[RMDB]
RNA sequence: GGGAACGACUCGAGUAGAGUCGAAAACGUCAUGGUAGGUUACUAGCGGACUCAUACUCCGUUGGGUUGUAGCUCAUUUGGGUAGAGCACUCGUUUUUGGAACGAAUGGUAGCCGGUUCAAAUCCGGAUAGUUCUAUGUGUUCGCACAUAGAACUAUAAAAGAAACAACAACAACAAC
Reactivity to DMS in 0.01 (KOAc 150mM, MgCl2 10mM, bicine 150mM(pH8.5), 24C), signal-to-noise 9, nucleotides 027 to 126: c110g010u010c060a040u010g010g010u010a030g000g000u020u010a100c040u010a050g020c020g010g000a050c030u010c270a110u020a110c300u000c000c050g010u000u000g010g000g000u000u010g010u010a090g010c020u010c010a110u010u020u020g010g020g010u010a060g000a060g020c040a110c080u000c010g010u000u000u010u040u020g020g000a030a030c030g010a020a070u010g000g000u010a100g010c000c000g000g000u000u000c130a080a300a100u020c010c000g000g000
Reactivity to 2A3 in 0.01 (KOAc 150mM, MgCl2 10mM, bicine 150mM(pH8.5), 24C), signal-to-noise 9, nucleotides 027 to 126: c020g050u040c020a060u070g030g040u060a050g040g060u140u130a080c020u020a020g020c010g010g010a010c000u010c030a060u060a110c010u010c010c000g010u000u010g020g010g000u010u070g080u070a040g010c000u010c030a100u090u080u200g100g010g020u100a040g010a010g020c030a040c030u040c010g030u010u010u010u100u140g140g060a030a010c010g010a040a030u070g060g010u050a020g010c000c000g000g010u040u060c030a010a010a040u020c000c000g000g010
Chemical mapping of a 177-nucleotide RNA with DMS and 2A3. Values cover nucleotides 27 to 126. In probing experiments dimethyl sulfate is read out at A N1 and C N3, which are open when not base-paired.